Description:
Source: RMDB library RSTRND, as collected in RNAgym. Structure probing data (2A3 and DMS) for a 207-nucleotide construct. DMS adducts were read by reverse transcription with MarathonRT. The reactions ran in a buffer of 150 mM KOAc, 10 mM MgCl2 and 150 mM bicine (pH 8.5), at 24 C.
RNA sequence: GGGAACGACUCGAGUAGAGUCGAAAACACACGUUUCGCACGUGGACAGUGGAUUCUGAUGGUCAUAUUACAGUGUGCUAGCGAGGGAACUCCGUCCGGGGGUGAACCGCGAAACAGUACCGGACUCACCAAGUAGCAUCCUGUCUUUCGGAGACUGCCCUGGAGUAUAGUUCGCUAUACUCCAGGGAAAAGAAACAACAACAACAAC
Reactivity to 2A3 in 0.01 (KOAc 150mM, MgCl2 10mM, bicine 150mM(pH8.5), 24C), signal-to-noise 5, nucleotides 027 to 156: c080a000c000a000c030g010u040u090u100c150g010c000a020c020g040u040g020g040a010c040a050g070u100g070g020a100u120u000c040u060g060a080u090g040g020u070c080a040u070a090u260u170a090c040a050g010u030g000u000g040c000u030a060g200c010g030a210g030g030g010a030a090c070u020c140c050g060u030c040c000g000g000g000g000g010u080g060a040a050c040c020g050c040g050a050a080a020c050a020g060u060a080c000c010g010g020a020c010u020c090a050c030c000a050a030g020u010a000g040c000a010u010c000c020u010g030u020c000u030u060u080c050g070g010a040g010a070c020u030g020
Reactivity to DMS in 0.01 (KOAc 150mM, MgCl2 10mM, bicine 150mM(pH8.5), 24C), signal-to-noise 2, nucleotides 027 to 156: c140a050c030a020c090g010u000u010u000c090g050c020a130c020g020u010g040g030a110c090a080g000u000g000g000a220u020u000c060u000g010a070u000g020g020u000c010a140u020a050u000u000a130c080a000g000u000g050u010g010c000u020a150g010c040g000a180g010g020g010a150a070c030u010c010c020g020u000c050c010g010g000g020g020g020u000g010a090a160c000c120g020c020g000a100a020a190c040a060g010u000a100c000c050g010g010a030c030u000c030a130c060c050a050a110g010u010a040g000c030a060u000c240c000u000g000u000c100u010u000u010c050g000g000a120g020a060c040u000g010